[RMDB]
RNA sequence: GGGAACGACUCGAGUAGAGUCGAAAAUGAUGAGCGACGGUAAAUUGGUUGGCAAUACUCUGCGUCAGCAGGGCGUCACCAUCACUCUGGGAGUAUCGCAUUAAUGUUAACCGUAAUUGGCAUUGGGCCCCGCUUUAGAAUUCGUUCUAAAGCGGGGAAAAGAAACAACAACAACAAC
Reactivity to 2A3 in 0.01 (KOAc 150mM, MgCl2 10mM, bicine 150mM(pH8.5), 24C), signal-to-noise 1, nucleotides 027 to 126: u080g030a000u050g000a010g020c030g010a010c030g000g090u150a120a070a140u090u040g090g040u100u120g060g000c000a000a040u110a110c000u020c000u010g020c040g160u220c100a070g000c000a000g000g000g060c010g010u010c030a020c020c000a030u010c010a010c010u070c040u090g070g010g000a050g050u050a050u070c070g010c070a050u040u140a050a040u040g030u070u040a020a020c010c010g010u010a080a020u090u050g080g000c030a020u020u100g020g030g020
Reactivity to DMS in 0.01 (KOAc 150mM, MgCl2 10mM, bicine 150mM(pH8.5), 24C), signal-to-noise 2, nucleotides 027 to 126: u010g010a030u000g010a150g010c050g020a020c020g020g000u030a040a100a070u010u010g020g030u010u010g050g000c030a050a040u010a200c010u000c020u000g010c020g040u000c300a090g000c030a010g020g000g020c060g020u000c090a040c060c000a040u020c080a050c050u000c030u020g000g000g000a090g010u010a060u000c100g000c070a060u000u020a020a030u000g000u000u030a030a020c050c060g010u010a110a150u000u000g000g000c030a070u000u000g000g030g010
Conditions: 150 mM KOAc, 10 mM MgCl2 and 150 mM bicine (pH 8.5), 24 C. An RNA of 177 nucleotides, treated with 2A3 and DMS and read out base by base. Values cover nucleotides 27 to 126. 2A3 adducts were read by reverse transcription with SuperScript II with manganese.